The record gives the reactivity of an RNA of 177 nucleotides to 2A3. For 2A3 the reverse transcriptase was SuperScript II with manganese. The RNA was probed in 150 mM KOAc, 10 mM MgCl2 and 150 mM bicine (pH 8.5) at 24 C. For 2A3, 472 sequencing reads were counted. Values cover nucleotides 27 to 126.
RNA sequence: GGGAACGACUCGAGUAGAGUCGAAAACGACGGUGCGCUCUCCGUAACUGGUGCCACUGAGAUCAUACCGAUAAUUAAUCGCGUUGUCGGAGAUCACCAGUUUCGUGCCGUUGUCGCAUCGAUGGACCCUGCCGACCUGGUUCGCCAGGUCGGCAGGAAAAGAAACAACAACAACAAC
Reactivity to 2A3 in 0.01 (KOAc 150mM, MgCl2 10mM, bicine 150mM(pH8.5), 24C), signal-to-noise 1, nucleotides 027 to 126: c060g000a000c010g000g020u030g000c000g000c000u060c000u040c060c020g000u010a000a000c000u000g000g030u000g060c050c030a120c110u080g010a060g030a090u070c030a030u050a250c000c000g000a000u020a000a030u200u110a100a150u120c110g000c100g090u000u000g050u000c000g000g000a030g030a050u090c000a000c000c000a000g000u000u000u030c040g030u240g070c010c000g030u040u090g040u100c000g000c060a000u050c020g040a030u090g140g000a130c010